[RMDB]
RNA sequence: GGGAACGACUCGAGUAGAGUCGAAAACGCAAUGACGUAAGGUGGGACUUUCCUUCCGGGACCAAGCGGUUGGUCCCGAGGGGGGUGUGACCCAGGUACCGCCGUAGAAACUGGGUUACGACGUCUACCCGGGAUUCAAACCCGGUCCCCUCCAGAAGACUUCUACAUGGUUCGCCAUGUAGAAGUCAAAAGAAACAACAACAACAAC
Reactivity to 2A3 in 0.01 (KOAc 150mM, MgCl2 10mM, bicine 150mM(pH8.5), 24C), signal-to-noise 1, nucleotides 027 to 156: c040g000c090a130a210u220g080a010c010g040u100a060a060g090g080u120g060g010g060a070c010u090u060u060c000c000u100u000c060c020g000g000g010a010c010c040a040a000g020c020g090g130u030u020g000g000u010c000c020c000g000a030g030g010g000g000g010g030u050g020u020g010a000c000c000c000a000g000g010u020a040c020c020g010c020c050g000u050a060g140a070a240a010c020u010g000g000g000u010u010a010c030g010a010c030g100u020c100u030a080c030c000c000g000g010g000a090u210u270c080a170a060a060c030c000c000g020g010u050c000c000c000c030u070c030c010a100g080a170a000
This 207-nucleotide RNA was probed chemically with 2A3.
Reactivities are rounded to 0.1 and cut off at 0 and 3.
For 2A3, 678 sequencing reads were counted.
2A3 adducts were read by reverse transcription with SuperScript II with manganese.
The RNA was probed in 150 mM KOAc, 10 mM MgCl2 and 150 mM bicine (pH 8.5) at 24 C.